The data come from the RNA Mapping Database (RMDB), libraries RFM100 and RFMREP. The record gives the reactivity of an RNA of 177 nucleotides to 2A3 and DMS. Values cover nucleotides 27 to 126. The reactions ran in a buffer of 150 mM KOAc, 10 mM MgCl2 and 150 mM bicine (pH 8.5), at 24 C.

RNA sequence: GGGAACGACUCGAGUAGAGUCGAAAAUUUUGCAACCAAUAGUACUGGGCAUCAUAGUGAAACAUGUUUGCAGCGCCAACGAUGGCAUAUAACUGUAUUUCGUCUGGAGAGUCAAGUGAGGACUAUGACGUCAGAAAUGUUUCGACAUUUCUGACGUAAAAGAAACAACAACAACAAC
Reactivity to 2A3 in 0.01 (KOAc 150mM, MgCl2 10mM, bicine 150mM(pH8.5), 24C), signal-to-noise 3, nucleotides 027 to 126: u080u090u060u060g040c060a100a070c010c030a040a040u100a060g070u070a050c050u040g000g020g000c010a010u010c000a030u060a010g040u080g090a110a040a020c070a040u110g110u080u040u080g050c030a050g040c000g010c020c020a020a030c040g070a060u050g050g010c050a010u120a000u020a090a110c070u020g050u060a140u030u040u030c010g010u000c080u040g020g000a070g000a020g040u060c020a020a030g020u040g080a030g070g000a010c000u000a040u100g020
Reactivity to DMS in 0.01 (KOAc 150mM, MgCl2 10mM, bicine 150mM(pH8.5), 24C), signal-to-noise 4, nucleotides 027 to 126: u010u030u010u030g010c120a050a140c040c020a060a060u020a090g020u010a130c050u010g000g000g000c060a050u010c040a050u010a050g010u010g000a140a060a110c070a060u020g000u000u000u000g030c040a080g000c130g010c020c000a060a080c140g010a090u010g010g000c030a060u030a030u010a100a120c120u000g010u020a080u020u020u000c030g000u010c050u040g010g010a060g010a100g000u000c030a030a050g000u020g010a120g000g000a050c040u010a050u010g000